[RMDB]
The data come from the RNA Mapping Database (RMDB), library M2PK50.
This 177-nucleotide RNA was probed chemically with DMS and 2A3.
DMS adducts were read by reverse transcription with MarathonRT.
For DMS, 1,803 sequencing reads were counted.
RNA sequence: GGGAACGACUCGAGUAGAGUCGAAAAUACCAAUGGUUCGCCAUUGGUACUUGUAUUGACGAAUACUACCGUAGAAGUAUUCAGGUCUCAUAAGUACGGAUAUACACUAGAGUUUCGACUCUAGUAAUGAAGAGUUCAUGUUCGCAUGAACUCUUCAAAAAGAAACAACAACAACAAC
Reactivity to DMS in 0.01 (KOAc 150mM, MgCl2 10mM, bicine 150mM(pH8.5), 24C), signal-to-noise 3, nucleotides 027 to 126: u000a000c010c010a020a000u000g000g000u000u000c290g030c000c010a010u000u010g000g020u000a010c070u000u020g010u000a100u020u000g020a100c120g000a040a020u000a010c010u010a080c050c080g010u010a030g020a150a060g010u010a010u000u000c020a140g020g010u010c010u000c030a130u010a060a070g020u010a010c010g000g010a300u000a100u000a070c210a030c010u010a010g000a010g010u000u010u000c170g030a050c010u000c000u000a010g000u000a040a070
Reactivity to 2A3 in 0.01 (KOAc 150mM, MgCl2 10mM, bicine 150mM(pH8.5), 24C), signal-to-noise 2, nucleotides 027 to 126: u050a000c010c000a000a000u010g050g010u030u030c170g030c100c010a000u000u020g000g000u000a020c000u040u070g110u140a170u090u170g080a010c030g000a020a000u000a030c030u040a130c030c040g050u060a050g050a250a010g030u000a010u000u010c050a050g120g080u000c040u020c050a070u130a150a060g110u040a030c020g030g050a030u040a020u030a210c070a010c030u000a000g010a000g000u000u080u110c170g060a020c000u000c000u010a000g010u010a000a030